[RMDB]
RNA sequence: GGGAACGACUCGAGUAGAGUCGAAAAGAUAUGGAUCGACUGGUAUGGAGAAUUGUCGGAAACGAUGUUCUAUGAAGUACUUCGAUCCUAAGUCAAAGCUCAUUACCACUUCGGUGGUAAUGAGCAACGUUUCAAAAGUGUUCGCACUUUUGAAACGAAAAGAAACAACAACAACAAC
Reactivity to 2A3 in 0.01 (KOAc 150mM, MgCl2 10mM, bicine 150mM(pH8.5), 24C), signal-to-noise 3, nucleotides 027 to 126: g020a000u040a010u100g000g000a000u020c010g010a020c280u300g010g100u100a050u100g240g020a020g000a070a090u300u300g110u050c000g010g050a040a010a000c010g000a010u000g010u020u000c040u070a300u270g220a300a080g020u010a020c000u030u000c000g000a000u000c010c000u010a070a000g000u000c070a150a080a010g000c000u010c010a000u000u020a010c000c010a000c050u050u120c300g100g000u010g010g000u010a000a000u000g020a000g000c000a000a000
Reactivity to DMS in 0.01 (KOAc 150mM, MgCl2 10mM, bicine 150mM(pH8.5), 24C), signal-to-noise 3, nucleotides 027 to 126: g000a020u000a190u010g010g000a010u000c000g020a000c300u010g000g020u000a010u010g000g020a010g000a020a010u000u030g080u000c010g010g010a070a030a140c000g000a000u000g000u000u000c000u000a150u000g010a100a180g000u000a000c010u000u000c000g010a010u000c000c000u000a000a090g000u000c030a090a070a180g000c000u000c000a010u010u000a000c010c000a020c000u000u010c220g000g030u000g010g000u000a000a010u020g030a000g000c010a000a010
Overview
This 177-nucleotide RNA was probed chemically with 2A3 and DMS. The 2A3 profile rests on 3,832 reads. High DMS reactivity at an A or C suggests that its Watson-Crick edge is free. Source: RMDB library TTRDEL, as collected in RNAgym.